[RMDB]
Overview:
This 207-nucleotide RNA was probed chemically with DMS and 2A3. For DMS the reverse transcriptase was MarathonRT. For 2A3, 1,845 sequencing reads were counted. Conditions: 150 mM KOAc, 10 mM MgCl2 and 150 mM bicine (pH 8.5), 24 C. For 2A3 the reverse transcriptase was SuperScript II with manganese. The DMS profile rests on 5,473 reads.

RNA sequence: GGGAACGACUCGAGUAGAGUCGAAAAGAGUUCGGUUGGAGCGACAAGUAUUUAGCUUGAGAUAGUUAAAUCACCUCGGUAUGAUUAGGGUGAGACCUAGGAACCGUAGGGGUAUUCUCAAAGGAAGGUUACCGAACAACCUUCGGGUUGUUCGGAAUCAAAAUAGAAGGUUCGCCUUCUAUUUUGAAAAAGAAACAACAACAACAAC
Reactivity to DMS in 0.01 (KOAc 150mM, MgCl2 10mM, bicine 150mM(pH8.5), 24C), signal-to-noise 2, nucleotides 027 to 156: g000a120g010u000u000c020g020g020u020u000g010g010a080g030c040g000a070c030a040a070g020u010a020u000u000u000a060g000c010u000u000g010a260g000a120u000a040g010u000u000a030a030a070u000c000a060c010c010u020c020g030g000u000a080u010g020a180u000u000a070g010g020g010u010g010a240g010a140c010c000u000a080g010g000a110a070c020c020g040u010a080g000g000g000g010u020a060u000u000c040u000c030a040a060a140g020g000a080a050g030g010u010u000a140c000c000g020a050a030c000a010a010c010c010u000u020c300g040g010g040u000u000g010u000u020c000g030g000a010a020
Reactivity to 2A3 in 0.01 (KOAc 150mM, MgCl2 10mM, bicine 150mM(pH8.5), 24C), signal-to-noise 2, nucleotides 027 to 156: g050a000g010u080u060c030g010g050u080u050g040g030a040g030c030g040a030c030a050a020g050u080a070u050u080u040a030g010c000u010u030g010a020g000a090u110a060g050u040u080a010a050a070u050c000a030c010c010u020c020g000g020u270a150u190g030a060u030u070a040g000g040g000u040g060a060g030a010c010c010u020a010g010g020a030a020c020c030g010u030a040g000g000g000g020u020a090u130u070c050u000c010a060a070a000g060g010a030a020g060g010u060u120a060c000c000g000a000a000c000a000a000c010c000u030u030c140g040g020g000u000u000g000u010u000c000g000g000a000a020